[RMDB]
RNA sequence: GGGAACGACUCGAGUAGAGUCGAAAAUGGCAUCUCAGGCAUUAGAGACCAGGUUUUUUGUUUCCAGGUAACUCCUGCUUAUGGCUCAAAUGCAUGUCAAGUAGUACACAAAUCUGUCUCAUAUUAGAAUGCAGUGAAUAUUUCUCAGCACUUACCAAGUUUAAAAUCCAUUCGUGGAUUUUAAACUAAAAGAAACAACAACAACAAC
Reactivity to 2A3 in 0.01 (KOAc 150mM, MgCl2 10mM, bicine 150mM(pH8.5), 24C), signal-to-noise 3, nucleotides 027 to 156: u050g030g020c020a040u000c050u050c130a090g140g000c020a050u080u110a050g000a010g090a140c030c020a050g010g040u020u030u050u020u070u110g030u050u070u030c040c020a030g000g030u000a030a050c040u080c070c010u030g020c010u160u080a090u150g000g000c000u000c040a010a040a070u060g010c020a020u040g040u020c040a050a040g020u030a010g090u100a100c070a000c030a070a090a060u050c040u020g060u030c010u030c050a080u100a100u170u080a100g090a130a040u100g020c020a000g000u040g050a070a020u090a070u100u100u010c020u020c010a010g050c020a020c130u130u160a030c180c010a050
Reactivity to DMS in 0.01 (KOAc 150mM, MgCl2 10mM, bicine 150mM(pH8.5), 24C), signal-to-noise 2, nucleotides 027 to 156: u010g040g000c020a080u000c030u000c050a130g020g030c050a090u010u010a110g010a070g000a080c040c020a130g070g010u000u000u000u000u000u000g010u000u000u010c030c020a120g040g040u000a070a080c130u000c030c030u020g010c020u000u000a060u000g000g070c010u010c030a060a060a130u010g000c070a080u020g000u010c070a050a150g010u000a080g030u000a080c050a070c030a050a090a060u010c020u000g030u000c040u010c060a130u000a130u010u010a150g000a080a100u000g000c040a070g050u000g000a090a140u000a080u000u000u000c030u010c020a130g020c030a080c030u010u000a100c050c030a070